Overview:
The record gives the reactivity of an RNA of 177 nucleotides to 2A3 and DMS. For DMS, 1,206 sequencing reads were counted. It was measured as part of the RMDB library RFM100. The 2A3 profile rests on 1,086 reads. For DMS the reverse transcriptase was MarathonRT.
RNA sequence: GGGAACGACUCGAGUAGAGUCGAAAAUUCUACUUAUAGAUGGCUAAAAUCUGAGUUUGAGAGCAGCAUGCCACAGAUGCUUGGAUUUUACUAUUGGAUUUUGCUGCCGGAAUAGGGCUUUCGGGACCCCUACAUGUCCGUUCGCGGACAUGUAGGGAAAAGAAACAACAACAACAAC
Reactivity to 2A3 in 0.01 (KOAc 150mM, MgCl2 10mM, bicine 150mM(pH8.5), 24C), signal-to-noise 1, nucleotides 027 to 126: u040u020c030u000a110c010u120u100a030u060a160g030a050u030g020g000c100u060a020a000a000a040u000c000u000g030a050g080u070u150u070g210a150g000a020g090c010a000g050c030a050u160g030c060c020a120c040a030g160a090u100g020c000u020u010g040g000a060u020u020u000u000a010c000u020a040u020u040g080g030a080u070u050u000u200g100c110u030g000c050c000g000g020a060a050u090a110g000g000g060c000u080u030u020c020g010g000g080a060c000
Reactivity to DMS in 0.01 (KOAc 150mM, MgCl2 10mM, bicine 150mM(pH8.5), 24C), signal-to-noise 1, nucleotides 027 to 126: u000u000c000u000a090c100u020u010a160u020a110g000a040u010g010g020c100u000a060a060a000a050u000c060u000g000a010g000u000u020u050g010a210g000a280g000c100a150g020c150a030u030g030c040c000a020c190a080g000a030u020g000c090u000u000g000g000a070u020u000u000u000a090c020u000a020u000u010g000g060a020u060u000u020u000g020c000u000g000c000c040g030g000a050a190u000a050g040g000g000c020u000u000u000c050g020g020g050a280c160